[RMDB]
RNA sequence: GGGAACGACUCGAGUAGAGUCGAAAAAGCAACGAGUGUGUGUGGGACGUUUUAUCCCAAGCUCUGAGUACAGCACGCGCUCACACACACCGCGAGCGAGCAUCAGCAGAGCGCAAACGCUGGUAAAUUGAACCUUCUACUUCGGUAGAAGGUUCAAAAAAGAAACAACAACAACAAC
Reactivity to DMS in 0.01 (KOAc 150mM, MgCl2 10mM, bicine 150mM(pH8.5), 24C), signal-to-noise 2, nucleotides 027 to 126: a110g010c030a120a070c000g030a260g000u000g020u000g000u000g000u010g010g000g010a070c020g000u010u000u020u000a150u020c000c000c010a130a150g010c120u000c080u000g000a140g010u000a090c110a040g010c020a150c070g010c100g040c000u000c000a000c000a020c000a010c020a010c000c020g000c030g000a100g020c040g010a090g000c100a050u000c030a060g020c040a100g000a130g000c060g040c070a080a080a100c140g040c010u000g020g020u000a050a070a130